[RMDB]
RNA sequence: GGGAACGACUCGAGUAGAGUCGAAAAAGGAACUCAAUCUGACAGCAGUUUUGGUUAUUUUGCCAAUGUCUGCUAAUCUGUGUUCAAGGGUGACUUUUAUGGGGUUGAGGUACAUAUGACUGGGCUACAUUCUUGGAGUGUUCGCACUCCAAGAAUGAAAAGAAACAACAACAACAAC
Reactivity to DMS in 0.01 (KOAc 150mM, MgCl2 10mM, bicine 150mM(pH8.5), 24C), signal-to-noise 3, nucleotides 027 to 126: a070g010g010a090a070c010u010c020a050a080u010c060u010g010a120c270a050g020c010a020g000u000u000u000u000g010g010u010u000a140u010u010u020u020g000c010c000a010a020u000g010u000c000u010g010c010u000a110a170u000c040u000g010u000g000u000u000c130a110a090g000g000g010u010g000a130c080u000u010u000u000a090u010g010g010g010g020u000u000g010a050g000g000u010a050c100a080u000a060u000g020a070c070u000g000g010g000c070u000a150
Reactivity to 2A3 in 0.01 (KOAc 150mM, MgCl2 10mM, bicine 150mM(pH8.5), 24C), signal-to-noise 2, nucleotides 027 to 126: a010g030g010a050a020c010u000c060a020a130u110c080u040g020a030c060a030g000c000a000g020u040u000u000u070g060g000u130u140a300u120u300u300u190g000c050c000a000a010u020g150u110c000u000g020c000u000a000a090u050c010u030g090u020g020u100u070c050a040a040g020g010g010u070g050a100c020u110u010u130u030a090u200g010g000g010g050u110u080g020a020g000g000u030a050c070a000u140a080u190g090a070c060u030g020g040g000c020u050a020

Annotation:
Structure probing data (DMS and 2A3) for a 177-nucleotide construct. As a SHAPE reagent, 2A3 marks flexible, mostly unpaired nucleotides at the ribose 2'-OH. Values cover nucleotides 27 to 126.